This 207-nucleotide RNA was probed chemically with 2A3.
The 2A3 profile rests on 664 reads.
It was measured as part of the RMDB library OK3TST.
The reactions ran in a buffer of 150 mM KOAc, 10 mM MgCl2 and 150 mM bicine (pH 8.5), at 24 C.
Values are in units of 0.01, from 0 to 300, in steps of 10.
RNA sequence: GGGAACGACUCGAGUAGAGUCGAAAAACAUUUUUCAAAACUCAUCUCAACAGCCCCUCCUCCAGGGAGCCUUCUUCCCUCCCCAGGCAGGACGGGGACUCCGGACUCCCGGCACACACCUCCACUGGGACUAUUCGGCCUGCGGUGACUGCAUGCAGACCUAAUUACUGUUCGCAGUAAUUAGGUCAAAAGAAACAACAACAACAAC
Reactivity to 2A3 in 0.01 (KOAc 150mM, MgCl2 10mM, bicine 150mM(pH8.5), 24C), signal-to-noise 1, nucleotides 027 to 156: a000c060a050u100u140u120u180u200c120a140a090a010a080c030u030c060a090u090c110u040c040a060a140c010a140g010c020c000c000c000u000c010c000u000c000c000a000g000g020g000a010g000c030c040u190u090c030u070u050c030c000c000u000c010c010c000c000a000g060g060c070a000g000g000a000c060g040g000g010g000a000c010u020c030c000g040g070a080c000u040c010c000c000g000g000c030a060c010a020c020a020c110c010u050c040c020a040c030u030g000g000g050a020c060u060a090u130u100c020g030g040c000c000u060g000c020g020g020u020g070a080c010u060g010c040a000u130g000c040a000